This 177-nucleotide RNA was probed chemically with 2A3 and DMS. For 2A3, 5,541 sequencing reads were counted. The reactions ran in a buffer of 150 mM KOAc, 10 mM MgCl2 and 150 mM bicine (pH 8.5), at 24 C. The data come from the RNA Mapping Database (RMDB), library OK1LIB.
[RMDB]
RNA sequence: GGGAACGACUCGAGUAGAGUCGAAAACAGUGAUGGAAACAUCACUGAAAAACCGGAAACGGACAUCACGAUCGCGCGGAUGUCGGGAAACCGUAAACGCGAAAAGAGCUAGCGAAAGCUAGCUCAAGAUUAGGAUCCACUUCGGUGGAUCCUAAUCAAAAGAAACAACAACAACAAC
Reactivity to 2A3 in 0.01 (KOAc 150mM, MgCl2 10mM, bicine 150mM(pH8.5), 24C), signal-to-noise 4, nucleotides 027 to 126: c010a000g000u000g000a000u000g000g010a040a020a000c000a000u000c000a000c000u000g000a050a010a000a000a010c020c020g100g050a130a110a010c040g070g020a010c010a010u000c020a010c300g010a050u020c010g010c000g000c010g020g000a020u010g010u010c000g000g030g030a090a060a000c020c000g010u090a070a140a060c010g000c010g020a050a020a010a030g000a000g000c010u000a000g000c000g070a120a020a010g000c010u000a010g000c000u000c000a000a000
Reactivity to DMS in 0.01 (KOAc 150mM, MgCl2 10mM, bicine 150mM(pH8.5), 24C), signal-to-noise 2, nucleotides 027 to 126: c000a000g010u000g000a000u000g010g000a260a040a170c000a020u000c000a000c040u000g000a000a060a060a040a170c010c020g030g020a020a240a130c020g030g000a010c010a000u000c020a120c030g060a050u000c000g000c000g000c000g000g000a010u000g030u000c010g000g010g030a070a130a030c300c050g000u020a010a010a070c020g000c000g000a110a100a110a140g000a000g030c010u000a000g020c000g000a040a060a110g010c000u000a030g010c000u000c010a010a000